[RMDB]
RNA sequence: GGGAACGACUCGAGUAGAGUCGAAAACAGUGAUGGAAACAUCACUGAAAAACGUGGCAGCGCAGCACGAAAAAGUCGAUCGAAUACCGAUCGACAAGCGCUAAAGUCAUGCCGAAAGGCAUGACAAAUAUCGUGACUGAUUCGUCAGUCACGAUAUAAAAGAAACAACAACAACAAC
Reactivity to DMS in 0.01 (KOAc 150mM, MgCl2 10mM, bicine 150mM(pH8.5), 24C), signal-to-noise 4, nucleotides 027 to 126: c020a010g040u000g020a010u010g000g000a220a080a170c000a000u000c010a000c010u000g010a060a050a090a060a240c000g000u010g000g000c060a010g000c000g070c000a300g000c000a030c000g010a060a040a010a010a020g000u000c010g010a010u020c000g020a240a150u040a110c220c010g020a000u000c000g010a000c000a040a050g010c010g010c000u000a110a110a100g000u000c000a010u000g000c000c000g000a060a080a150g010g000c000a000u000g000a000c000a030a050
Reactivity to 2A3 in 0.01 (KOAc 150mM, MgCl2 10mM, bicine 150mM(pH8.5), 24C), signal-to-noise 6, nucleotides 027 to 126: c000a000g000u010g000a010u000g000g030a050a010a040c000a010u000c000a010c000u010g010a040a000a000a000a000c010g000u010g020g000c050a030g000c040g000c000a040g040c010a010c110g290a140a020a010a000a000g000u000c000g000a000u000c000g010a040a050u140a300c130c010g000a000u000c000g000a000c000a000a000g000c000g000c000u010a060a010a000g000u000c000a000u000g000c010c000g050a090a030a010g000g000c000a000u000g000a000c000a000a000